[RMDB]
RNA sequence: GGGAACGACUCGAGUAGAGUCGAAAACGUCUACAGUUCGCUGUAGACGAAAGGCGCGGCACCGUCCGCGGAACAAACGGGCCCAUACAAAAUUUAAAAUAAAAAGAUGAUGGUUCGCCAUCAUCAACACAGAUGAUAUGUUCGCAUAUCAUCUGUGAAAAGAAACAACAACAACAAC
Reactivity to DMS in 0.01 (KOAc 150mM, MgCl2 10mM, bicine 150mM(pH8.5), 24C), signal-to-noise 2, nucleotides 027 to 126: c020g020u000c010u000a020c010a010g000u000u010c160g040c010u010g000u000a000g000a000c000g010a040a080a070g010g010c050g000c000g000g000c000a300c010c010g010u010c000c010g000c010g030g000a020a220c110a000a030a010c010g000g000g020c020c010c020a170u000a110c040a070a070a050a110u010u010u010a080a120a080a130u030a020a040a100a100a140g000a000u000g010a010u020g000g010u000u000c160g010c000c000a000u000c000a000u010c010a050a240
Reactivity to 2A3 in 0.01 (KOAc 150mM, MgCl2 10mM, bicine 150mM(pH8.5), 24C), signal-to-noise 4, nucleotides 027 to 126: c020g000u000c010u000a000c000a020g030u050u070c120g030c120u010g010u000a010g000a000c010g010a010a010a010g060g000c030g000c010g000g010c060a040c100c020g140u150c000c020g000c000g080g200a020a010c000a010a020a010c010g010g010g050c000c030c010a050u160a120c070a050a270a070a090u230u300u300a170a160a100a060u300a080a090a000a030a040g010a000u010g000a000u000g000g050u020u040c160g030c050c000a000u000c000a000u000c000a000a020

Conditions: 150 mM KOAc, 10 mM MgCl2 and 150 mM bicine (pH 8.5), 24 C. This 177-nucleotide RNA was probed chemically with DMS and 2A3. For 2A3, 4,431 sequencing reads were counted. For DMS the reverse transcriptase was MarathonRT. Values cover nucleotides 27 to 126.